[RMDB]
RNA sequence: GGGAACGACUCGAGUAGAGUCGAAAAUUUUUUAAGCACACCACAUGACACACCCCCACGAUAACGGUUUAAAUCACCAGCUAUGUGAACUGCCCUCCAUUCUACUCAAAUGAGUGGUGGUGUGUGGCAUAUUAGAACCAUUUCGUCUAAUGAUGACUAGUUAGAACUACUUCGGUAGUUCUAACUAAAAAGAAACAACAACAACAAC
Reactivity to DMS in 0.01 (KOAc 150mM, MgCl2 10mM, bicine 150mM(pH8.5), 24C), signal-to-noise 1, nucleotides 027 to 156: u010u000u000u100u000u050a100a170g110c000a000c000a110c030c010a040c080a110u020g010a180c050a050c030a200c000c020c000c010c000a070c010g010a110u000a060a020c050g030g000u010u000u000a040a150a180u010c110a060c050c000a150g040c060u060a060u000g000u010g000a070a290c030u010g000c040c000c000u000c000c010a000u020u000c020u000a120c070u000c050a080a110a130u030g020a150g000u000g000g010u000g020g000u000g050u000g020u010g020g000c030a020u010a060u000u000a060g010a060a020c030c080a210u000u000u000c040g000u000c020u020a110a040u010g000a100u000g010a040c050